[RMDB]
RNA sequence: GGGAACGACUCGAGUAGAGUCGAAAAGUCGGCGGUAACGUCAACAACAUAGGUAACCUUAUUCUCACUACUCGCGAAGGCGCUCAGCUGGAUGCGGGAUCAGUCAUUGGGUUGAAGGGUGAUGUAGGACCUGAACGACCACAAGUUGCUGGCGUUACUCGCUAGAUAAGUUCGCUUAUCUAGCGAGAAAAGAAACAACAACAACAAC
Reactivity to 2A3 in 0.01 (KOAc 150mM, MgCl2 10mM, bicine 150mM(pH8.5), 24C), signal-to-noise 2, nucleotides 027 to 156: g100u070c090g070g070c050g020g030u010a000a050c000g000u010c010a020a000c010a020a000c000a060u170a090g030g000u100a070a080c000c000u090u060a110u180u060c070u030c050a050c030u070a050c000u000c000g000c020g000a000a000g010g000c030g060c130u220c270a080g000c000u000g020g020a010u130g030c000g000g000g010a010u070c050a010g070u010c060a130u050u190g050g000g000u050u030g070a140a040g070g030g000u080g020a120u100g050u070a050g050g090a060c000c020u060g030a090a080c050g070a060c020c020a050c020a130a110g020u020u010g030c020u020g000g010c000g000u000u000a000
Reactivity to DMS in 0.01 (KOAc 150mM, MgCl2 10mM, bicine 150mM(pH8.5), 24C), signal-to-noise 1, nucleotides 027 to 156: g010u000c050g030g020c040g020g060u000a010a030c010g000u000c020a000a060c020a010a020c000a170u000a080g060g010u000a080a030c000c040u000u000a010u000u000c080u000c080a090c010u000a150c020u010c010g050c040g000a300a300g030g020c030g010c070u010c190a290g050c010u000g000g000a240u010g010c030g080g000g030a010u000c080a030g010u000c020a190u000u000g000g010g030u000u000g030a120a250g000g000g000u000g000a070u000g000u000a060g020g010a070c070c010u000g000a120a110c070g030a050c010c030a080c030a080a270g000u000u000g020c020u000g010g010c020g020u010u010a100

About this RNA
The record gives the reactivity of an RNA of 207 nucleotides to 2A3 and DMS. The 2A3 profile rests on 1,196 reads. For DMS the reverse transcriptase was MarathonRT. Values are in units of 0.01, from 0 to 300, in steps of 10.